Chemical mapping of a 207-nucleotide RNA with 2A3 and DMS. Conditions: 150 mM KOAc, 10 mM MgCl2 and 150 mM bicine (pH 8.5), 24 C. For 2A3, 1,515 sequencing reads were counted. The DMS profile rests on 4,593 reads.
RNA sequence: GGGAACGACUCGAGUAGAGUCGAAAAUAGCUUACGGCUUAGGAACAGAACUGUUGAGAAUGGGAGAGUUGUAAAUCAAACAAUCAUGGUUGUUCCUCUGUACAAAACUGAUGUGCAGAUAUUCAAAACAUCUCCUGUAGAUCUUGAGCAAGAUGUGUCCCUUUAUCGAAUUCGUUCGAUAAAGGGAAAAAGAAACAACAACAACAAC
Reactivity to 2A3 in 0.01 (KOAc 150mM, MgCl2 10mM, bicine 150mM(pH8.5), 24C), signal-to-noise 3, nucleotides 027 to 156: u070a020g030c030u080u120a030c050g030g000c010u050u040a060g020g050a030a070c030a050g060a110a040c040u080g050u170u100g070a100g040a040a070u080g010g030g000a040g010a050g010u020u100g040u180a060a080a150u120c120a060a060a080c030a060a060u100c050a110u100g040g010u010u020g010u030u070c020c020u000c000u000g000u010a020c010a020a080a160a050c100u240g160a120u070g100u010g000c000a010g010a020u070a100u100u130c090a030a040a000a000c030a050u000c000u000c040c000u000g010u030a060g020a090u010c000u020u110g030a020g060c010a040a000g050a170u070g040u040g050
Reactivity to DMS in 0.01 (KOAc 150mM, MgCl2 10mM, bicine 150mM(pH8.5), 24C), signal-to-noise 3, nucleotides 027 to 156: u000a070g020c040u010u000a100c070g040g000c050u000u010a080g030g030a070a140c060a160g010a010a070c040u010g000u000u010g000a140g000a110a040u010g010g000g010a080g020a140g030u010u010g040u010a080a080a120u000c090a100a120a120c060a090a060u020c080a120u020g030g000u000u000g020u000u010c030c060u010c010u000g030u000a030c020a010a050a090a260c170u010g000a150u010g020u000g000c000a050g010a090u020a090u010u010c050a070a040a040a030c040a090u000c010u000c030c030u000g000u000a040g020a070u000c040u000u000g010a060g020c050a050a050g010a110u010g030u000g000